[RMDB]
RNA sequence: GGGAACGACUCGAGUAGAGUCGAAAAGAAAAGAUGCACAAGGAGCGCGUGCAACAUUAGAGCCAGGACGAGCACGAGGAACACGACACGAACCGGAGUCCUGGCGCGUAUCCAGUUCAAAAGAAAAAUUAUAUUUAUGGUUCGCCAUAAAUAUAAUAAAAGAAACAACAACAACAAC
Reactivity to 2A3 in 0.01 (KOAc 150mM, MgCl2 10mM, bicine 150mM(pH8.5), 24C), signal-to-noise 8, nucleotides 027 to 126: g120a000a070a000a000g080a030u090g000c010a000c010a060a220g010g000a010g030c020g000c010g030u020g010c020a060a040c020a060u150u210a050g030a000g060c000c000a000g010g000a000c020g030a030g100c070a040c130g030a090g010g040a080a030c050a020c160g200a030c030a010c150g040a070a000c020c000g020g010a010g000u000c000c000u000g000g000c000g000c010g010u010a110u040c020c000a020g020u070u110c050a050a050a060a050g110a030a110a030a020
Reactivity to DMS in 0.01 (KOAc 150mM, MgCl2 10mM, bicine 150mM(pH8.5), 24C), signal-to-noise 6, nucleotides 027 to 126: g010a120a070a100a070g010a100u010g010c020a020c040a070a070g010g000a040g020c040g000c130g010u010g000c060a080a070c170a130u020u010a090g000a110g010c000c000a020g000g010a010c020g020a090g010c120a100c060g000a140g000g010a080a110c110a100c110g010a150c140a080c130g000a080a140c100c030g000g000a190g000u000c000c010u010g000g000c030g010c030g010u000a030u010c040c020a060g010u030u010c070a090a060a090a090g010a050a060a060a050
This 177-nucleotide RNA was probed chemically with 2A3 and DMS. It was measured as part of the RMDB library OK1LIB. DMS (dimethyl sulfate) methylates the pairing face of unpaired adenines and cytosines. For 2A3, 10,166 sequencing reads were counted. For DMS, 11,268 sequencing reads were counted.